[RMDB]
RNA sequence: GGGAACGACUCGAGUAGAGUCGAAAAAGGGAGCUUGACUGUGAGACCGACGGGUCGAGCAGGGACGAAAGUCGGGACUAGUGAUCCGGCAGUGGCUUGUGGAAGCGCUGUCGCUCAACGGAUAAAAUCGUAUCCUUAGGUUCGCCUAAGGAUACGAAAAAGAAACAACAACAACAAC
Reactivity to DMS in 0.01 (KOAc 150mM, MgCl2 10mM, bicine 150mM(pH8.5), 24C), signal-to-noise 4, nucleotides 027 to 126: a070g000g000g010a130g010c050u010u010g010a110c030u000g010u010g000a290g000a040c030c010g000a150c300g010g020g010u000c010g000a300g000c030a030g010g030g010a050c080g010a090a080a070g020u000c030g020g000g010a140c090u000a100g020u000g000a070u000c130c020g010g000c000a010g000u010g020g020c010u000u000g000u010g010g010a040a010g020c010g010c010u000g010u000c020g010c210u000c030a070a070c090g000g010a140u010a050a070a090a090
Reactivity to 2A3 in 0.01 (KOAc 150mM, MgCl2 10mM, bicine 150mM(pH8.5), 24C), signal-to-noise 2, nucleotides 027 to 126: a000g080g000g000a060g040c020u080u040g050a070c030u010g010u020g060a040g030a050c010c000g050a100c180g180g010g020u000c010g000a010g000c000a010g040g000g000a010c010g090a110a060a020g020u030c010g030g000g010a050c050u090a070g080u010g080a060u020c030c000g000g000c000a000g000u060g180g050c020u100u140g100u160g160g200a020a060g000c000g000c020u030g010u070c010g010c030u020c010a070a050c040g050g030a050u110a110a080a020a100